Structure probing data (2A3) for a 207-nucleotide construct.
[RMDB]
RNA sequence: GGGAACGACUCGAGUAGAGUCGAAAAGAACGUACACAUAGUCCGCAUCGUAGCGUUCGAAACGCAAGAAAGCGACAGUCCUCGAAACGCCGUGAAAACAAUUCAUGCUGUACACAUAGGCCAGGAACAUAAAGUAGGGCUUAGUCAUCACCAUGCGGUCCACCCAAAUUUUCGAAUUUGGGUGGACAAAAGAAACAACAACAACAAC
Reactivity to 2A3 in 0.01 (KOAc 150mM, MgCl2 10mM, bicine 150mM(pH8.5), 24C), signal-to-noise 1, nucleotides 027 to 156: g050a110a000c020g000u070a010c070a000c040a040u130a070g080u190c030c000g080c060a030u090c070g080u030a020g020c010g020u080u090c000g040a020a040a000c010g020c040a000a090g020a300a100a010g040c070g070a020c070a030g110u000c010c000u030c020g030a060a090a000c000g000c000c000g000u020g010a000a000a060a090c020a020a200u070u160c000a010u120g040c040u000g000u080a000c010a000c000a160u160a050g000g010c010c000a060g060g050a070a070c060a060u150a040a190a000g060u040a030g040g040g000c000u040u060a020g020u040c050a040u050c000a070c040c010a040u030g070c130g040